An RNA of 177 nucleotides, treated with 2A3 and DMS and read out base by base. Values cover nucleotides 27 to 126. Reactivities are rounded to 0.1 and cut off at 0 and 3. The RNA was probed in 150 mM KOAc, 10 mM MgCl2 and 150 mM bicine (pH 8.5) at 24 C. For DMS, 11,794 sequencing reads were counted. It was measured as part of the RMDB library OK1LIB.
[RMDB]
RNA sequence: GGGAACGACUCGAGUAGAGUCGAAAACUUGGAGCCGUAGCGGCUACAGAUUGUCUUGUGUGCAACUGAGCACGCAUAAGUGUUUGGGGCAGCGUGUUGCGGUAGGCGACACGCCGUGGGCGAGAAAGUAAUUAGGAGGGUUCGCCCUCCUAAUUACAAAAGAAACAACAACAACAAC
Reactivity to 2A3 in 0.01 (KOAc 150mM, MgCl2 10mM, bicine 150mM(pH8.5), 24C), signal-to-noise 5, nucleotides 027 to 126: c030u040u090g060g050a010g020c030c010g070u150a030g080c060g090g010c000u040a080c020a090g160a300u070u080g060u060c080u110u160g050u040g040u030g030c010a120a120c100u060g050a030g050c020a060c110g000c030a030u100a150a130g050u070g030u110u060u050g030g000g010g000c020a010g000c000g010u010g000u020u020g000c060g130g150u260a130g250g000c010g000a010c010a000c000g010c000c000g010u070g040g020g000c070g000a040g060a060a100a030
Reactivity to DMS in 0.01 (KOAc 150mM, MgCl2 10mM, bicine 150mM(pH8.5), 24C), signal-to-noise 4, nucleotides 027 to 126: c070u020u030g010g000a070g000c000c010g040u030a120g010c150g010g000c000u000a050c030a030g000a120u030u010g010u000c090u000u000g030u000g000u030g000c000a130a120c150u040g000a110g010c000a020c000g010c150a060u030a060a060g000u000g020u000u010u010g010g000g010g000c080a130g010c000g000u000g020u010u000g010c010g020g030u030a070g010g000c010g000a020c020a020c010g000c000c020g030u010g000g010g010c040g000a090g000a100a080a120